[RMDB]
RNA sequence: GGGAACGACUCGAGUAGAGUCGAAAACUUGCAUGCAAUUCGAUGUAUACCUUAGUGACCCGCACUACACUGAGAAAGUAGCAAUUUACUAUGCGAAGCUAGUAAAUUAGCGGAUUUCGAGGUGGAGCAGACGCUACAUCUUCGGAUGUAGCGUCUGAAAAGAAACAACAACAACAAC
Reactivity to DMS in 0.01 (KOAc 150mM, MgCl2 10mM, bicine 150mM(pH8.5), 24C), signal-to-noise 1, nucleotides 027 to 126: c070u010u010g010c110a030u000g060c040a070a160u000u000c120g020a120u000g000u000a070u000a040c000c220u000u000a060g000u000g000a100c060c010c020g050c200a110c050u000a030c010a000c020u000g000a300g000a040a010a010g040u020a260g020c000a030a010u000u000u000a000c000u000a000u000g010c020g010a120a070g050c100u000a000g010u000a000a010a010u000u000a100g000c000g000g000a300u000u000u000c000g010a300g010g010u000g000g020a030g000
Reactivity to 2A3 in 0.01 (KOAc 150mM, MgCl2 10mM, bicine 150mM(pH8.5), 24C), signal-to-noise 1, nucleotides 027 to 126: c060u020u080g020c020a040u060g020c000a010a300u140u210c040g110a040u050g080u060a050u020a080c030c100u040u040a000g000u020g100a090c020c000c000g000c000a010c020u030a010c000a010c010u050g010a000g030a020a000a000g020u060a090g010c000a000a000u000u000u040a010c010u000a040u170g000c060g140a040a020g000c020u000a000g010u000a000a020a020u010u020a030g000c010g150g300a070u030u010u010c010g000a010g000g010u000g010g000a010g000